[RMDB]
RNA sequence: GGGAACGACUCGAGUAGAGUCGAAAAAACAAGUGCACCAAGUUCAGUUAACAGACAAAUACUGCAGUGUUAAUGUAGUAGCUUGGCUUUACGCAGCAAUACUUAAUGGUUGCGCUUGGUUUGUAAAGAGGCUUACGGUUCGCCGUAAGCAAAAGAAACAACAACAACAAC
Reactivity to DMS in 0.01 (KOAc 150mM, MgCl2 10mM, bicine 150mM(pH8.5), 24C), signal-to-noise 5, nucleotides 027 to 129: a030a050c000a000a030g020u000g000c030a000c000c010a000a000g020u050u010c110a050g030u040u010a020a020c190a050g040a000c000a020a020a050u020a000c000u000g050c000a050g040u040g060u130u070a060a080u020g000u020a000g020u030a000g000c120u000u000g040g020c010u010u000u000a040c150g030c100a100g010c130a080a000u040a050c070u000u000a040a050u030g000g010u080u040g000c000g050c000u000u000g010g020u010u000u020g000u070a020a070a080g030a110g030
Reactivity to 2A3 in 0.01 (KOAc 150mM, MgCl2 10mM, bicine 150mM(pH8.5), 24C), signal-to-noise 9, nucleotides 027 to 129: a000a000c000a000a000g010u000g010c010a000c010c000a030a010g020u030u030c050a010g010u040u060a080a060c030a060g090a030c020a020a030a010u030a020c010u020g000c010a010g040u030g070u300u240a130a130u050g020u000a010g000u000a010g030c140u010u010g030g020c010u040u100u080a080c140g030c060a050g030c040a100a060u050a110c010u050u110a030a030u100g020g060u130u100g020c000g000c000u000u000g010g020u020u060u040g060u060a040a050a010g120a030g070

The record gives the reactivity of an RNA of 170 nucleotides to DMS and 2A3. The reactions ran in a buffer of 150 mM KOAc, 10 mM MgCl2 and 150 mM bicine (pH 8.5), at 24 C. DMS (dimethyl sulfate) methylates the pairing face of unpaired adenines and cytosines.